[RMDB]
RNA sequence: GGGAACGACUCGAGUAGAGUCGAAAAGGCGUGGAGAGAGGGCCGCGGUGCUCUGGAGUAGAGGCUCUGCCUUCGAAACACCAUCGAUCGUCCCUUCUUCUUUACCUUCUUCUGGCUCUUCCGAUGAGACGCGACCGGUGGCAUCACCUCUCGGUUCGGUAUCCAUUAGCUUCGGCUAAUGGAUACCAAAAGAAACAACAACAACAAC
Reactivity to 2A3 in 0.01 (KOAc 150mM, MgCl2 10mM, bicine 150mM(pH8.5), 24C), signal-to-noise 1, nucleotides 027 to 156: g040g030c120g120u070g010g000a010g020a020g010a030g020g010g000c010c000g020c000g000g020u000g000c000u000c000u000g000g000a000g020u010a000g000a010g040g000c040u090c130u300g060c050c000u130u160c000g010a020a010a000c000a010c140c000a000u010c000g030a300u030c010g000u000c000c000c000u000u000c000u000u000c000u000u070u070a030c000c000u040u000c070u050u010c050u110g000g000c010u000c000u060u060c020c030g050a050u100g030a040g040a040c020g030c020g080a030c010c000g020g020u020g010g020c070a110u100c060a100c010c000u010c010u070c020g020g000u050u100c070